Annotation:
This 177-nucleotide RNA was probed chemically with 2A3 and DMS. Conditions: 150 mM KOAc, 10 mM MgCl2 and 150 mM bicine (pH 8.5), 24 C.
RNA sequence: GGGAACGACUCGAGUAGAGUCGAAAACGGGCGGCGAAACAGGAAUCUUGCGCUGCGAGAGGAAGGGCGCUACUGAAAAGAGCCGCUGGAGGACCACCUUUUCUCGCAGGUAACGUGAAAGUCCUCGCACCAUGCCUAAUUUCGAUUAGGCAUGGUGAAAAGAAACAACAACAACAAC
Reactivity to 2A3 in 0.01 (KOAc 150mM, MgCl2 10mM, bicine 150mM(pH8.5), 24C), signal-to-noise 3, nucleotides 027 to 126: c000g010g010g000c020g020g000c050g060a050a030a060c040a020g000g100a100a120u130c140u170u190g000c050g000c000u060g050c020g010a050g010a020g130g120a160a220g100g030g000c020g020c040u090a090c020u020g040a100a050a110a090g050a060g020c030c010g030c020u000g050g020a010g000g020a000c010c020a020c010c080u030u030u030u040c020u000c010g020c020a020g010g020u060a060a030c050g040u030g120a050a010a000g000u000c000c010u000c020g020
Reactivity to DMS in 0.01 (KOAc 150mM, MgCl2 10mM, bicine 150mM(pH8.5), 24C), signal-to-noise 3, nucleotides 027 to 126: c040g000g010g030c030g000g000c000g020a120a100a130c080a030g000g020a150a110u000c170u000u000g010c030g020c010u000g010c010g000a050g010a060g020g010a070a090g000g010g000c050g040c020u000a130c050u000g000a050a040a140a130g000a230g030c010c000g000c050u000g040g010a040g010g010a070c030c090a100c010c000u010u000u010u000c020u000c020g020c130a050g000g010u020a030a110c120g000u000g010a030a080a080g000u000c000c010u000c060g020
It was measured as part of the RMDB library OK2TST. 2A3 adducts were read by reverse transcription with SuperScript II with manganese. In probing experiments dimethyl sulfate is read out at A N1 and C N3, which are open when not base-paired.